[RMDB]
RNA sequence: GGGAACGACUCGAGUAGAGUCGAAAAGUACGAUCGAGGGUACAGCACAAUCUCAACAUUUGUUUAAUUUAACAACUCAAACACUGAAGAAAGUCAAAGGACUGUACUACUUUGUAGGUGUAGCAGUUCUAAGAAGCAACUUCGGUUGCUUCUUAGAAAAAGAAACAACAACAACAAC
Reactivity to 2A3 in 0.01 (KOAc 150mM, MgCl2 10mM, bicine 150mM(pH8.5), 24C), signal-to-noise 5, nucleotides 027 to 126: g030u020a010c010g020a100u100c030g020a030g010g090g000u030a040c040a000g030c010a020c010a060a110u000c030u010c050a050a170c040a160u040u020u030g100u000u090u040a130a220u070u140u180a060a040c040a030a020c020u040c070a070a160a020c020a000c030u070g010a050a010g040a090a110a030g040u100c110a160a120a040g090g010a020c030u060g020u040a010c030u020a030c010u050u020u110g060u090a020g000g060u050g010u020a020g010c090a000g020u010
Reactivity to DMS in 0.01 (KOAc 150mM, MgCl2 10mM, bicine 150mM(pH8.5), 24C), signal-to-noise 3, nucleotides 027 to 126: g030u000a060c040g000a050u020c080g000a070g020g000g020u010a090c030a050g000c070a110c110a090a080u000c040u000c020a110a160c150a170u010u040u000g000u000u000u030a080a060u010u010u020a080a130c130a030a090c180u030c050a060a050a020c050a020c060u000g000a090a090g000a050a040a050g000u000c080a070a100a160g000g010a020c040u000g010u010a050c060u030a070c040u020u000u000g020u020a040g000g010u010g010u000a090g000c100a020g000u000